[RMDB]
An RNA of 177 nucleotides, treated with 2A3 and DMS and read out base by base.
High DMS reactivity at an A or C suggests that its Watson-Crick edge is free.
DMS adducts were read by reverse transcription with MarathonRT.
Values cover nucleotides 27 to 126.

RNA sequence: GGGAACGACUCGAGUAGAGUCGAAAAUCGAUCAGGCCUGGCCUCGGCCCGGCGCGUGUGAUCACAUGCGCCAGCGCGAUCGCGCCGCGAGAGGAUCGGAUCGUGCGCGUGGCGCUGGUACACGCAGAUCGUACUACGGGUUCGCCCGUAGUACGAUAAAAGAAACAACAACAACAAC
Reactivity to 2A3 in 0.01 (KOAc 150mM, MgCl2 10mM, bicine 150mM(pH8.5), 24C), signal-to-noise 2, nucleotides 027 to 126: u110c010g030a030u020c030a040g110g000c010c000u030g030g000c050c000u070c210g090g000c010c000c020g000g020c040g000c020g020u070g050u030g050a080u070c060a020c010a180u160g000c030g000c000c000a010g000c000g010c010g060a120u070c040g010c000g000c080c030g020c050g040a070g030a020g170g130a200u150c060g060g020a090u050c040g030u090g050c050g000c030g020u040g050g000c000g000c020u000g000g010u050a020c050a000c020g000c010a020g020
Reactivity to DMS in 0.01 (KOAc 150mM, MgCl2 10mM, bicine 150mM(pH8.5), 24C), signal-to-noise 3, nucleotides 027 to 126: u010c100g010a050u010c050a140g010g010c000c000u010g000g000c020c040u000c300g030g010c000c010c110g000g000c020g020c030g020u010g010u000g010a050u010c080a200c180a050u000g010c030g000c000c010a050g030c010g010c000g010a050u000c030g030c050g000c030c030g010c070g000a080g000a140g010g010a080u010c060g000g010a080u010c020g040u010g030c030g020c050g010u000g010g020c020g000c020u000g000g000u000a020c020a020c000g010c050a150g000

For 2A3, 3,455 sequencing reads were counted. As a SHAPE reagent, 2A3 marks flexible, mostly unpaired nucleotides at the ribose 2'-OH.